[RMDB]
RNA sequence: GGGAACGACUCGAGUAGAGUCGAAAAAUCUUCAGCAACCGAGCUGUGGUGAAGUACAGCCGGCUGGAGGAUGUGCUGCACGGUUGCUCCUGGAAGAUCAACAACAAGCUGGAUGGCACAUACCUGACAUAUUAGCUGCGUUCGCGCAGCUAAUAUGAAAAGAAACAACAACAACAAC
Reactivity to DMS in 0.01 (KOAc 150mM, MgCl2 10mM, bicine 150mM(pH8.5), 24C), signal-to-noise 4, nucleotides 027 to 126: a040u000c000u000u000c000a050g010c030a100a110c120c000g010a110g020c000u000g010u000g010g020u000g010a150a200g010u020a020c010a010g000c030c010g020g000c030u010g000g000a040g010g020a020u000g010u000g000c020u000g010c300a100c060g010g000u000u000g000c070u000c120c030u010g010g010a080a070g010a040u000c070a060a050c080a050a050c100a080a070g020c070u000g010g020a100u000g000g010c030a040c050a030u000a150c040c010u000g000a230
Reactivity to 2A3 in 0.01 (KOAc 150mM, MgCl2 10mM, bicine 150mM(pH8.5), 24C), signal-to-noise 3, nucleotides 027 to 126: a000u010c000u020u010c000a010g000c020a040a060c080c030g010a040g060c010u020g030u050g050g140u210g150a140a020g050u090a030c010a010g000c000c020g030g000c000u010g020g010a010g010g000a030u030g010u020g020c030u020g020c020a030c070g040g010u010u020g020c010u020c000c030u070g080g010a060a030g020a080u080c010a000a100c010a030a020c010a020a040g040c040u050g080g040a110u050g080g000c000a000c000a030u070a110c000c020u030g030a030